[RMDB]
RNA sequence: GGGAACGACUCGAGUAGAGUCGAAAAACUAUCAAAUGCUUGUCGAGUAAUCAGACGUGUCAGAAGGCCAUAAGUAAGCACAUUGUUUCAAAGAAUUGCAACUUUAACUACGAUCUACUCAAGAAACGUAGAUACAGAAGUUCGCUUCUGUAUCUACAAAAGAAACAACAACAACAAC
Reactivity to DMS in 0.01 (KOAc 150mM, MgCl2 10mM, bicine 150mM(pH8.5), 24C), signal-to-noise 3, nucleotides 027 to 126: a090c060u010a080u000c080a080a090a100u010g020c040u000u010g010u000c050g010a110g010u010a040a060u000c060a060g020a060c080g030u000g040u000c050a060g040a100a100g010g000c030c030a050u000a040a080g010u000a050a040g010c020a040c110a060u000u000g010u020u010u000c080a050a030a110g010a040a060u000u000g020c050a030a060c030u000u000u000a080a060c060u000a170c050g000a160u000c020u000a030c010u000c040a050a080g000a070a090a060c170
Reactivity to 2A3 in 0.01 (KOAc 150mM, MgCl2 10mM, bicine 150mM(pH8.5), 24C), signal-to-noise 4, nucleotides 027 to 126: a000c070u080a070u180c040a050a080a100u130g030c040u060u090g080u090c030g040a040g080u080a050a070u030c030a000g030a080c060g020u040g010u030c010a040g020a100a010g110g000c020c000a040u040a110a030g040u020a070a030g030c000a010c010a080u040u110g080u050u130u080c110a110a080a040g070a080a120u080u050g020c010a030a020c010u030u040u090a090a050c040u080a040c050g010a020u000c010u020a000c000u000c050a030a050g050a070a040a000c080